[RMDB]
RNA sequence: GGGAACGACUCGAGUAGAGUCGAAAAGAUAUGGAAUUCCUUAACGAGCUGGUUUCGGAAACGAAACACAGCGAUGAGUUAACAUGGAAUUCCUAAGUCAAAGGCUGACCCGUUCGCGGGUCAGCCAGCCUAGUAACAUGUUCGCAUGUUACUAGGCAAAAGAAACAACAACAACAAC
Reactivity to DMS in 0.01 (KOAc 150mM, MgCl2 10mM, bicine 150mM(pH8.5), 24C), signal-to-noise 2, nucleotides 027 to 126: g000a020u010a230u020g010g000a030a000u000u000c010c010u000u000a020a040c020g020a150g000c000u000g000g000u000u000u000c010g010g010a080a070a080c000g010a010a000a000c010a100c010a010g030c000g010a090u020g030a270g010u000u000a010a040c300a180u010g000g000a020a010u000u000c000c000u010a010a110g000u000c010a090a140a140g020g010c000u000g020a010c000c000c000g040u000u020c300g040c030g010g000g000u000c000a010g010c000c000a020
Reactivity to 2A3 in 0.01 (KOAc 150mM, MgCl2 10mM, bicine 150mM(pH8.5), 24C), signal-to-noise 2, nucleotides 027 to 126: g000a000u040a020u070g010g000a030a000u010u040c000c000u010u020a060a040c180g100a130g050c020u000g000g000u030u000u000c010g000g000a040a010a010c000g020a060a030a010c300a060c000a300g000c040g030a110u160g040a040g040u030u030a050a050c130a300u150g000g000a000a020u000u010c000c000u000a060a020g010u000c070a150a100a060g000g000c000u000g000a000c020c030c000g020u040u030c300g000c010g110g000g030u000c000a010g010c000c000a000
Conditions: 150 mM KOAc, 10 mM MgCl2 and 150 mM bicine (pH 8.5), 24 C. An RNA of 177 nucleotides, treated with DMS and 2A3 and read out base by base. It was measured as part of the RMDB library TTRDES. For DMS the reverse transcriptase was MarathonRT. DMS (dimethyl sulfate) methylates the pairing face of unpaired adenines and cytosines. Values are in units of 0.01, from 0 to 300, in steps of 10. For DMS, 2,793 sequencing reads were counted.